[RMDB]
RNA sequence: GGGAACGACUCGAGUAGAGUCGAAAAGAUAUGGAGGAUCGAAGGCUUGGAUUUACCCAGAAAUACUCACAUGUCGGAAACGACAUGUGAGUACACUGGGUUGUCAGCCUUGGAUCCUCCUAAGUCAUCGUGUAUAACACUUCGGUGUUAUACACGAAAAAGAAACAACAACAACAAC
Reactivity to DMS in 0.01 (KOAc 150mM, MgCl2 10mM, bicine 150mM(pH8.5), 24C), signal-to-noise 3, nucleotides 027 to 126: g020a030u000a300u010g000g020a000g000g010a010u000c000g010a050a050g010g010c000u000u010g020g010a030u000u010u000a030c000c000c010a010g020a080a120a300u000a010c000u000c000a010c000a010u000g000u000c000g000g000a170a100a300c000g000a010c000a000u000g010u000g000a010g000u000a000c210a250c020u000g000g000g010u000u000g000u000c000a070g010c000c000u000u010g010g000a010u000c000c000u010c000c000u000a010a030g000u010c020a140
Reactivity to 2A3 in 0.01 (KOAc 150mM, MgCl2 10mM, bicine 150mM(pH8.5), 24C), signal-to-noise 2, nucleotides 027 to 126: g040a020u060a080u210g000g020a010g000g010a000u060c210g280a060a010g000g000c090u260u300g190g020a050u300u300u300a020c000c000c000a000g000a040a240a020u030a000c010u010c010a020c000a000u010g000u000c000g000g000a080a100a040c030g000a010c000a000u020g010u030g000a010g000u010a000c000a000c010u010g000g000g010u010u010g010u000c000a000g000c020c010u000u000g000g000a000u030c000c000u000c000c010u010a000a000g010u000c020a060